[RMDB]
RNA sequence: GGGAACGACUCGAGUAGAGUCGAAAACAUUCCAACCAGCAGAACUUUCUCAUAGUAAUGGUGAUCCUAUAUCAGUUAAUUCUAUGGUUUUGUUUGAUAAGGGCAAUAAAUUAUUAGUUGGUGGAGACUGCUCAGUGGCAUUCGUGCCACUGAGCAGAAAAGAAACAACAACAACAAC
Reactivity to 2A3 in 0.01 (KOAc 150mM, MgCl2 10mM, bicine 150mM(pH8.5), 24C), signal-to-noise 1, nucleotides 027 to 126: c000a000u050u050c010c010a100a150c000c000a000g000c000a030g000a130a080c000u000u290u000c080u050c070a050u040a070g030u050a000a050u100g000g040u050g120a160u160c000c120u290a220u000a000u300c000a030g070u000u160a010a010u200u000c150u100a010u100g000g060u000u000u000u140g090u000u000u000g140a140u030a000a030g070g000g000c000a040a040u030a230a030a000u030u080a150u030u050a070g000u050u000g000g050u040g030g000a000g010a000
Structure probing data (2A3) for a 177-nucleotide construct.